The data come from the RNA Mapping Database (RMDB), library M2RFPK. Structure probing data (DMS and 2A3) for a 207-nucleotide construct. For DMS the reverse transcriptase was MarathonRT.
[RMDB]
RNA sequence: GGGAACGACUCGAGUAGAGUCGAAAACUCAACUGACAUACAAGGGGAGGUUUCGGCCAAAUGUUGUAUGCAGAAAGCGUGAGGAAGGUGGCACUUAGACACUCACGAGUAGCGGUUCGGCAGUAGUAAAGGUCCUGGCGCUUCGGCGCCAGGACAACUAAACCUGUUAGUUCGCUAACAGGUUUAGAAAAGAAACAACAACAACAAC
Reactivity to DMS in 0.01 (KOAc 150mM, MgCl2 10mM, bicine 150mM(pH8.5), 24C), signal-to-noise 2, nucleotides 027 to 156: c020u000c020a080a180c020u000g010a100c050a090u000a070c040a090a050g000g030g030g010a300g010g000u000u000u000c080g030g020c030c020a050a140a190u000g030u000u000g020u010a040u000g000c030a070g010a110a100a110g010c030g020u000g030a060g020g000a050a070g030g000u010g010g020c010a050c060u010u000a080g000a110c050a090c060u000c020a080c080g000a140g010u000a040g020c020g000g010u010u000c050g030g000c050a070g000u010a080g000u000a060a060a170g000g040u010c000c000u010g000g000c010g070c000u000u010c290g040g000c060g010c020c000a000g000g010a010c020a000a050
Reactivity to 2A3 in 0.01 (KOAc 150mM, MgCl2 10mM, bicine 150mM(pH8.5), 24C), signal-to-noise 2, nucleotides 027 to 156: c040u040c020a030a090c030u010g060a100c000a040u030a010c000a010a020g110g000g020g020a030g050g000u000u100u130c140g140g000c000c030a040a030a070u120g010u090u030g000u020a010u020g000c000a000g090a040a020a030g060c040g010u020g030a010g050g020a050a060g000g020u020g030g000c020a010c090u070u130a000g000a050c020a020c080u050c030a030c040g020a010g000u040a010g020c040g010g040u060u090c050g050g000c050a050g050u170a010g010u060a070a150a060g120g010u020c000c000u010g000g000c040g020c000u040u100c270g040g000c000g000c000c040a010g000g000a000c000a000a000
For DMS, 3,297 sequencing reads were counted. The 2A3 profile rests on 977 reads. High 2A3 reactivity points to a flexible backbone, as in loops and unpaired stretches.